The record gives the reactivity of an RNA of 177 nucleotides to DMS and 2A3.
The reactions ran in a buffer of 150 mM KOAc, 10 mM MgCl2 and 150 mM bicine (pH 8.5), at 24 C.
For 2A3 the reverse transcriptase was SuperScript II with manganese.
DMS (dimethyl sulfate) methylates the pairing face of unpaired adenines and cytosines.
For DMS, 46,618 sequencing reads were counted.
The data come from the RNA Mapping Database (RMDB), library OK2TST.
RNA sequence: GGGAACGACUCGAGUAGAGUCGAAAACUUAUGAGCGUCAUCGUUUGGCACAAGAAGAAGGGAAAAUUCGCUUAGAGCUACAACAGCAUAAGCUUAGCCUUGAGCGCUUAGUUGCAAAACGCACGAGAAAUACAAUGUGUUUCGACACAUUGUAUUUAAAAGAAACAACAACAACAAC
Reactivity to DMS in 0.01 (KOAc 150mM, MgCl2 10mM, bicine 150mM(pH8.5), 24C), signal-to-noise 9, nucleotides 027 to 126: c040u000u010a100u010g010a120g020c040g010u000c090a080u010c040g010u000u000u000g010g010c020a030c030a040a030g000a050a050g000a290a050g000g000g000a040a060a090a140u000u000c120g010c010u000u000a020g000a140g020c010u000a100c300a060a110c250a030g010c020a090u000a010a020g000c010u000u000a050g010c010c010u000u000g000a200g010c160g010c030u000u000a060g020u000u000g010c020a030a020a020a030c040g030c300a030c060g000a080g010
Reactivity to 2A3 in 0.01 (KOAc 150mM, MgCl2 10mM, bicine 150mM(pH8.5), 24C), signal-to-noise 9, nucleotides 027 to 126: c050u130u100a110u300g150a080g060c020g050u040c050a100u080c030g050u040u060u040g030g000c010a010c020a050a020g050a030a010g030a020a030g040g030g030a030a100a080a140u110u070c010g000c000u010u010a030g020a070g110c010u070a080c060a300a030c030a120g000c000a020u010a040a010g000c000u020u040a020g010c000c000u030u040g020a020g000c050g010c030u020u020a070g020u140u080g000c000a030a030a030a040c040g060c010a020c040g060a080g140